[RMDB]
RNA sequence: GGGAACGACUCGAGUAGAGUCGAAAAUUGCGCCUCCAAUUCGCCGUCGGCAUUUCCCCAGCAGCCAUGACCUACCAGGCUGCGGUGCGGCUCGCCGCACAGGUCAUCCCUCAUCGGGCGCGUCCUGGAUAGGGCUAUACUUUCGAGUAUAGCCCAAGCGUAAUAAUGCGUUCGCGCAUUAUUACGCAAAAGAAACAACAACAACAAC
Reactivity to 2A3 in 0.01 (KOAc 150mM, MgCl2 10mM, bicine 150mM(pH8.5), 24C), signal-to-noise 1, nucleotides 027 to 156: u160u140g000c010g010c010c020u000c030c050a030a210u090u130c070g000c000c010g040u030c020g050g000c090a070u060u080u000c000c010c010c030a040g040c010a000g000c020c020a150u080g010a080c020c010u090a180c120c010a020g000g000c000u000g020c000g010g010u020g000c000g000g000c060u070c090g090c010c000g000c020a000c000a070g000g020u020c040a100u050c010c010c010u040c010a100u130c050g010g020g050c040g010c020g040u050c010c000u010g010g040a060u110a190g000g000g020c000u010a000u000a000c010u080u060u250c300g060a000g010u000a000u010a000g000c020c000c000a000a000

The record gives the reactivity of an RNA of 207 nucleotides to 2A3. 2A3 adducts were read by reverse transcription with SuperScript II with manganese. As a SHAPE reagent, 2A3 marks flexible, mostly unpaired nucleotides at the ribose 2'-OH.